[RMDB]
RNA sequence: GGGAACGACUCGAGUAGAGUCGAAAAGCUGCCUCUGACGUCCUUCUCCCCCGGAAACGGGGCCGAAGGGUGGUAAAGCGAGUCGCCUGGCGCUGGCACGGGUAUGCGUGGCGGUCGACCCUGGCCGCAUUAUUAUUACGUUCGCGUAAUAAUAAUGAAAAGAAACAACAACAACAAC
Reactivity to 2A3 in 0.01 (KOAc 150mM, MgCl2 10mM, bicine 150mM(pH8.5), 24C), signal-to-noise 6, nucleotides 027 to 126: g020c020u030g030c000c010u040c080u090g060a030c010g020u010c000c000u010u000c020u040c000c010c000c000c000g000g000a010a010a010c010g000g000g000g000c010c010g000a000a000g010g000g010u020g020g040u130a110a080a000g050c040g020a020g050u070c030g050c040c050u050g070g000c040g000c060u040g060g000c030a030c060g020g000g030u120a060u270g030c050g030u030g050g020c010g010g010u030c020g030a110c010c000c020u020g030g000c000c010g000
Reactivity to DMS in 0.01 (KOAc 150mM, MgCl2 10mM, bicine 150mM(pH8.5), 24C), signal-to-noise 9, nucleotides 027 to 126: g010c050u000g000c040c010u000c100u010g010a130c040g000u000c000c000u000u000c010u000c300c000c000c000c000g000g000a060a070a190c010g010g000g010g030c040c060g000a020a020g000g010g010u000g000g010u010a060a100a110g010c020g000a060g010u000c050g010c030c030u000g010g010c050g020c040u000g000g010c040a070c100g000g000g010u000a040u010g010c040g010u000g010g010c010g010g010u000c010g000a120c030c020c030u000g000g000c000c020g010